[RMDB]
RNA sequence: GGGAACGACUCGAGUAGAGUCGAAAAUCGAGAAAUAUUUACUAACAGGAUCGAGAAUUUUUUUCCUCAUUUAAACAGGUAGAGUUAUUCGUAACCAAAGAAAGGGUGCUGGUUCUAUCUUCACCUCCAGUAUGAUCCGUUUCGACGGAUCAUACUGAAAAGAAACAACAACAACAAC
Reactivity to 2A3 in 0.01 (KOAc 150mM, MgCl2 10mM, bicine 150mM(pH8.5), 24C), signal-to-noise 6, nucleotides 027 to 126: u020c010g000a000g160a020a090a030u280a130u150u250u120a190c090u080a110a100c050a120g090g040a090u030c030g020a020g060a070a060u120u080u060u000u020u050u090c010c010u130c060a110u130u260u170a100a170a030c060a010g060g020u080a020g020a010g020u040u050a070u170u090c030g020u070a030a090c010c030a110a080a040g200a060a120a070g120g000g010u010g010c010u020g010g020u040u000c000u020a040u010c000u050u070c030a060c030c040u070c030
Reactivity to DMS in 0.01 (KOAc 150mM, MgCl2 10mM, bicine 150mM(pH8.5), 24C), signal-to-noise 2, nucleotides 027 to 126: u000c000g050a050g020a110a090a080u030a030u020u010u000a070c060u020a060a200c220a090g000g000a010u000c060g000a120g040a060a040u000u000u000u010u000u020u000c040c000u000c110a170u040u000u000a030a080a060c240a070g000g000u030a040g000a050g000u020u000a000u000u000c000g000u000a020a150c030c000a030a110a110g000a070a070a070g040g010g000u000g000c060u000g000g000u020u020c110u000a110u030c000u000u000c080a060c000c020u020c180
The record gives the reactivity of an RNA of 177 nucleotides to 2A3 and DMS.
2A3 adducts were read by reverse transcription with SuperScript II with manganese.
DMS adducts were read by reverse transcription with MarathonRT.
High DMS reactivity at an A or C suggests that its Watson-Crick edge is free.